About this RNA: The record gives the reactivity of an RNA of 207 nucleotides to 2A3. Values cover nucleotides 27 to 156. The RNA was probed in 150 mM KOAc, 10 mM MgCl2 and 150 mM bicine (pH 8.5) at 24 C. 2A3 adducts were read by reverse transcription with SuperScript II with manganese.

[RMDB]
RNA sequence: GGGAACGACUCGAGUAGAGUCGAAAAACAUAUUACGAUAUGAUUCAGAUGGUGUCUUACUGGUUCGUACCAAGGGACAUAAUGGUUUCUUGUUUCCAACCAAAGAACAAUUGGCGAGCCUGAAUAAAAAACUGACUGCCGUUCGCGGCAGUCAGAACACCUACGGGUAGUUCGCUACCCGUAGGUGAAAAGAAACAACAACAACAAC
Reactivity to 2A3 in 0.01 (KOAc 150mM, MgCl2 10mM, bicine 150mM(pH8.5), 24C), signal-to-noise 1, nucleotides 027 to 156: a030c070a020u090a040u050u130a060c110g020a050u010a040u150g050a080u060u140c090a060g070a080u130g020g070u080g080u050c030u060u040a080c010u050g060g000u010u070c020g030u030a040c000c070a000a000g040g000g020a000c020a000u190a140a080u230g140g000u010u000u100c000u020u000g000u000u050u000c030c050a020a080c000c000a000a190a000g050a090a060c050a070a040u080u060g050g010c000g000a000g010c000c050u030g060a070a040u140a010a140a010a030a010a030c010u000g000a000c000u000g030c020c020g050u030u040c250g020c010g110g000c000a030g020u000c000a010g000a000a000